[RMDB]
RNA sequence: GGGAACGACUCGAGUAGAGUCGAAAAGAUAUGGACUAUCGUUUCGUGGCCUCUUUUGACGAAGUCCCAGUCGGAAACGACUGCGGCCCGGCUUCGAUAAGAGGCACGAAACGAUAGUCCUAAGUCACUCUUUAUAGUUCUUCGGAACUAUAAAGAGAAAAGAAACAACAACAACAAC
Reactivity to 2A3 in 0.01 (KOAc 150mM, MgCl2 10mM, bicine 150mM(pH8.5), 24C), signal-to-noise 1, nucleotides 027 to 126: g020a020u090a050u230g020g000a000c020u010a020u000c000g000u030u030u040c100g020u070g300g300c020c000u000c040u200u170u120u200g270a200c040g010a010a010g040u100c100c030c020a020g020u010c040g040g070a100a020a080c030g020a000c030u020g170c300g090g120c050c140c090g110g010c040u010u050c010g030a030u030a090a030g000a000g010g030c000a000c040g010a000a000a030c000g000a020u000a010g000u020c000c000u000a000a000g010u000c000a020
Reactivity to DMS in 0.01 (KOAc 150mM, MgCl2 10mM, bicine 150mM(pH8.5), 24C), signal-to-noise 3, nucleotides 027 to 126: g030a060u000a300u010g000g000a030c000u000a000u000c000g010u020u000u000c010g010u000g010g030c000c000u000c000u000u000u010u000g010a210c190g000a020a030g010u000c000c060c000a000g000u000c010g010g000a140a140a270c000g000a010c000u000g010c280g000g000c300c150c180g010g000c020u000u010c010g020a130u000a030a000g010a000g020g000c000a000c020g000a000a000a020c010g010a000u010a000g020u000c010c000u000a010a070g010u000c020a200

Structure probing data (2A3 and DMS) for a 177-nucleotide construct. It was measured as part of the RMDB library TTRINS. 2A3 adducts were read by reverse transcription with SuperScript II with manganese. Values cover nucleotides 27 to 126. For DMS the reverse transcriptase was MarathonRT. The DMS profile rests on 2,349 reads. For 2A3, 1,790 sequencing reads were counted. The reactions ran in a buffer of 150 mM KOAc, 10 mM MgCl2 and 150 mM bicine (pH 8.5), at 24 C.